[RMDB]
RNA sequence: GGGAACGACUCGAGUAGAGUCGAAAAGUCGCCGCUUCUACAUCAACGCCCAGCGCGGGCGAGGGAGGCGUCCUACGGGGGUGACCCAUUCGCCGGCAUGGUAGAGGACUGCAAGAUUGCCGCGACGCAGUGAGUACUGCUUCGGCAGUACUCACUGAAAAGAAACAACAACAACAAC
Reactivity to DMS in 0.01 (KOAc 150mM, MgCl2 10mM, bicine 150mM(pH8.5), 24C), signal-to-noise 2, nucleotides 027 to 126: g030u000c010g020c050c180g020c020u000u000c010u000a150c040a060u000c050a070a100c040g020c050c010c030a100g020c180g010c080g000g010g020c000g020a020g020g000g040a090g000g000c080g050u000c030c010u010a110c200g030g000g010g000g000u000g000a160c020c010c000a140u000u000c010g000c010c010g000g020c020a120u000g000g010u020a080g000a110g000g000a080c100u040g010c060a030a080g000a050u000u000g040c000c190g020c040g010a040c120g000
Reactivity to 2A3 in 0.01 (KOAc 150mM, MgCl2 10mM, bicine 150mM(pH8.5), 24C), signal-to-noise 2, nucleotides 027 to 126: g000u000c000g020c030c000g010c000u010u060c000u010a080c020a080u110c020a070a050c060g000c000c010c010a040g040c300g030c090g110g000g000c020g000a020g030g020g030a240g000g000c030g000u030c000c000u040a090c150g160g000g000g000g040u080g120a240c050c020c000a070u020u040c000g000c000c000g070g040c040a040u060g020g040u030a030g030a050g060g080a080c120u100g040c040a080a000g010a210u110u190g020c000c020g010c010g000a000c040g020